[RMDB]
RNA sequence: GGGAACGACUCGAGUAGAGUCGAAAAACUAAUCCAAAGCAAGUAUAGGAGAACAGGUUUUUAACUAUUUCUAGGCAGAUAAAAAAUAGUAUUUGACAGUCUAACACUAACUGAACAAUAAGUGUUAAAAACUCCCUCCUGUUCGCAGGAGGGAGAACCAGUGUCUCAUGUUCGCAUGAGACACUGGAAAAGAAACAACAACAACAAC
Reactivity to 2A3 in 0.01 (KOAc 150mM, MgCl2 10mM, bicine 150mM(pH8.5), 24C), signal-to-noise 1, nucleotides 027 to 156: a000c050u100a100a040u050c000c000a040a010a010g000c010a030a010g000u050a050u050a100g020g040a020g000a070a050c040a120g100g000u020u030u010u020u080a060a000c020u020a030u010u050u070c010u040a030g220g000c060a060g060a130u250a070a090a030a000a010a000u050a020g000u010a060u040u030u000g010a000c010a000g000u000c000u000a000a000c000a000c000u000a000a000c000u000g030a030a000c010a030a000u010a010a000g000u000g000u000u010a000a120a010a000a000c000u000c000c000c000u020c000c000u000g010u010u090c190g000c030a000g000g000a000g000g000g000a000g000a000a000